The data come from the RNA Mapping Database (RMDB), library RFM100. An RNA of 177 nucleotides, treated with DMS and 2A3 and read out base by base.

RNA sequence: GGGAACGACUCGAGUAGAGUCGAAAAAGCUUUCCCUUUUCAAGAGGUCCCCAGACACCGGCCACCCUCUUCCAGCCCCUGCGGCCAGUGCAAGGAGGCACCAAUGCUCUGAGGCUGUCGCGUGGUGCGGCAAACUACAUUUCGAUGUAGUUUGCCGAAAAGAAACAACAACAACAAC
Reactivity to DMS in 0.01 (KOAc 150mM, MgCl2 10mM, bicine 150mM(pH8.5), 24C), signal-to-noise 3, nucleotides 027 to 126: a040g020c150u020u000u000c020c030c020u000u000u000u020c110a180a130g010a110g040g010u020c000c000c000c010a180g000a120c090a070c050c030g000g010c030c050a090c030c010c000u010c070u010u020c040c050a140g010c030c010c020c110u040g000c000g000g010c030c020a040g040u020g030c040a070a270g000g010a060g020g000c070a110c160c100a120a070u050g020c020u000c050u010g020a240g010g010c040u020g000u020c030g010c010g000u000g010g020u000g010
Reactivity to 2A3 in 0.01 (KOAc 150mM, MgCl2 10mM, bicine 150mM(pH8.5), 24C), signal-to-noise 3, nucleotides 027 to 126: a000g060c050u110u020u060c020c000c040u070u050u020u010c110a100a000g050a010g020g050u050c010c010c000c010a010g020a030c030a020c030c030g010g020c000c010a030c030c020c000u000c000u050u050c030c010a000g020c010c010c000c020u070g010c020g020g010c000c050a040g000u060g160c010a070a070g100g000a020g020g040c030a040c070c000a050a130u210g010c000u040c040u040g030a020g010g000c010u000g030u020c020g000c020g030u040g000g070u080g020